[RMDB]
RNA sequence: GGGAACGACUCGAGUAGAGUCGAAAAAUGAACGUGGUGGGCGUAAGUUAGUAGAAGAUCUAAUGGUACGCGGUGGGUUUUCGACUGUACUCGAAACCACCACCACCACCAAGUCGUUCCCUCCGAACGGUUUCUAAAAGUUCGCUUUUAGAAACCGAAAAGAAACAACAACAACAAC
Reactivity to 2A3 in 0.01 (KOAc 150mM, MgCl2 10mM, bicine 150mM(pH8.5), 24C), signal-to-noise 1, nucleotides 027 to 126: a000u280g010a050a000c020g010u020g000g030u010g000g020g000c000g000u020a050a030g020u000u020a020g010u030a050g090a300a010g010a070u070c000u010a010a000u030g150g030u050a000c000g000c040g010g000u010g000g020g000u000u000u010u100c000g000a000c020u120g070u160a030c020u000c010g000a010a010a000c020c000a000c010c000a020c020c010a000c000c000a000c000c000a020a010g020u020c000g020u000u010c000c000c000u000c000c000g000a070a040
Reactivity to DMS in 0.01 (KOAc 150mM, MgCl2 10mM, bicine 150mM(pH8.5), 24C), signal-to-noise 1, nucleotides 027 to 126: a060u010g000a020a060c100g000u010g000g010u020g010g020g030c000g020u000a060a190g000u000u000a020g020u000a090g000a150a200g010a060u000c000u000a030a000u000g010g010u000a020c070g000c040g010g050u020g000g000g000u000u000u000u000c010g020a020c060u000g000u000a070c100u000c000g010a020a030a070c030c000a030c020c040a180c110c060a030c000c030a000c020c110a080a000g010u000c000g000u000u000c000c000c000u020c070c060g010a080a140